[RMDB]
RNA sequence: GGGAACGACUCGAGUAGAGUCGAAAAGAUAUGGAUCUAAUCAGGGAGCUAACCAUCGGAAACGAUGGCUAGCAUCGAUCUGAGGAUCCUAAGUCAAAACCCCCAUGUGCUUCGGCACAUGGGGGAAGUAGUAACGAACGUUCGCGUUCGUUACUACAAAAGAAACAACAACAACAAC
Reactivity to 2A3 in 0.01 (KOAc 150mM, MgCl2 10mM, bicine 150mM(pH8.5), 24C), signal-to-noise 1, nucleotides 027 to 126: g010a000u010a000u130g010g000a000u000c030u130a300a070u080c100a000g050g000g030a090g040c000u000a020a000c010c000a000u010c000g000g020a030a040a010c000g000a000u000g010g000c000u010a010g040c020a020u170c010g030a070u000c000u000g000a040g090g000a010u030c000c000u000a050a010g040u010c030a080a060a070a300c000c000c000c000c000a030u000g020u000g000c000u070u130c300g210g000c000a000c000a000u010g000g000g010g000g000a010a010
Reactivity to DMS in 0.01 (KOAc 150mM, MgCl2 10mM, bicine 150mM(pH8.5), 24C), signal-to-noise 1, nucleotides 027 to 126: g040a000u020a180u020g010g000a030u000c000u000a240a170u010c000a010g000g010g020a050g020c000u000a030a020c000c000a010u000c010g000g000a140a040a040c000g000a000u000g010g030c010u010a000g050c000a250u000c160g010a080u000c000u010g010a040g010g000a010u000c000c000u000a010a150g000u000c000a080a090a210a170c000c000c000c000c010a010u010g000u000g000c000u000u040c300g040g000c020a010c000a030u000g000g000g010g030g020a000a000

The data come from the RNA Mapping Database (RMDB), library TTRDES. Chemical mapping of a 177-nucleotide RNA with 2A3 and DMS. DMS adducts were read by reverse transcription with MarathonRT. 2A3 adducts were read by reverse transcription with SuperScript II with manganese.